[RMDB]
RNA sequence: GGGAACGACUCGAGUAGAGUCGAAAAGGGCCUAAGAGGAAGCGGCAGGCUCUAAAUCCAGACGUGAUGCAGCAGAGGGUGUCUGGCUUCCUGGGGCGUGUCCCCAUGAACAUGGACGGGUCCGAGCGCGAAGCUAAUGAUUCGUCAUUAGCUUCGCAAAAGAAACAACAACAACAAC
Reactivity to 2A3 in 0.01 (KOAc 150mM, MgCl2 10mM, bicine 150mM(pH8.5), 24C), signal-to-noise 1, nucleotides 027 to 126: g000g000g010c010c000u060a120a030g040a000g130g020a010a000g020c030g060g020c040a010g150g000c020u000c010u020a100a130a010u040c030c020a060g110a230c080g170u210g060a070u080g050c140a120g000c030a020g070a040g060g100g070u020g010u010c020u050g110g000c000u010u000c000c000u020g000g010g000g000c180g090u160g040u170c030c030c000c000a060u150g030a030a010c060a070u130g050g100a010c020g050g000g000u000c010c010g010a030g040c070
Reactivity to DMS in 0.01 (KOAc 150mM, MgCl2 10mM, bicine 150mM(pH8.5), 24C), signal-to-noise 3, nucleotides 027 to 126: g020g030g010c000c000u010a140a080g020a070g010g000a060a030g040c010g010g000c040a030g000g020c010u000c000u010a040a110a020u010c030c020a210g000a140c250g000u020g010a060u000g010c230a110g000c170a020g000a060g010g010g020u000g000u010c000u000g050g020c040u000u000c010c020u000g020g010g010g010c010g020u010g030u000c000c000c010c020a090u000g000a050a060c150a100u000g000g010a040c100g000g000g020u000c010c030g020a070g010c210